[RMDB]
Structure probing data (DMS and 2A3) for a 207-nucleotide construct. It was measured as part of the RMDB library M2RFPK. Conditions: 150 mM KOAc, 10 mM MgCl2 and 150 mM bicine (pH 8.5), 24 C. The DMS profile rests on 4,693 reads.
RNA sequence: GGGAACGACUCGAGUAGAGUCGAAAAGAGCUUUCGUCCGGAAUGGUUCCGCCGUGAUCGGGCCAUGCAAUAGUUGCCAACGACAACUAUGCUCCGGUUGCUCAGGCAGCGUAACGCUGCUUGAAAGAUGACGGCAAUCGCUUCGGCGAUUGCCGAACCAUCAGUUACAGUUCGCUGUAACUGAUGGAAAAGAAACAACAACAACAAC
Reactivity to DMS in 0.01 (KOAc 150mM, MgCl2 10mM, bicine 150mM(pH8.5), 24C), signal-to-noise 2, nucleotides 027 to 156: g000a100g030c030u000u000u000c030g020u000c000c010g020g000a120a050u010g000g010u010u010c040c020g040c050c080g040u010g020a150u000c000g010g040g010c010c020a080u000g030c080a070a040u000a010g000u000u000g030c010c020a240a190c230g010a070c000a010a030c000u000a000u000g010c050u010c040c040g000g030u000u000g000c030u000c000a050g010g000c010a020g030c000g010u020a140a140c130g020c010u010g000c070u020u010g010a070a090a150g010a180u000g000a170c030g020g020c000a020a010u000c010g000c000u000u000c300g050g020c000g010a020u000u000g050c000c000g010a010a020
Reactivity to 2A3 in 0.01 (KOAc 150mM, MgCl2 10mM, bicine 150mM(pH8.5), 24C), signal-to-noise 4, nucleotides 027 to 156: g030a000g020c040u080u170u140c020g080u020c030c010g040g000a060a050u070g040g000u300u300c020c040g010c060c110g190u180g070a220u150c000g000g000g000c010c010a020u050g000c000a050a300u000a000g000u000u000g030c050c070a160a050c160g080a130c030a000a000c010u000a000u000g000c000u000c010c000g020g000u040u100g020c020u010c020a000g020g000c000a010g010c010g080u160a120a030c200g000c000u000g000c000u000u020g030a050a030a010g060a050u120g070a020c010g000g000c000a000a000u000c000g010c020u060u030c220g120g000c000g000a000u000u010g000c000c000g000a000a000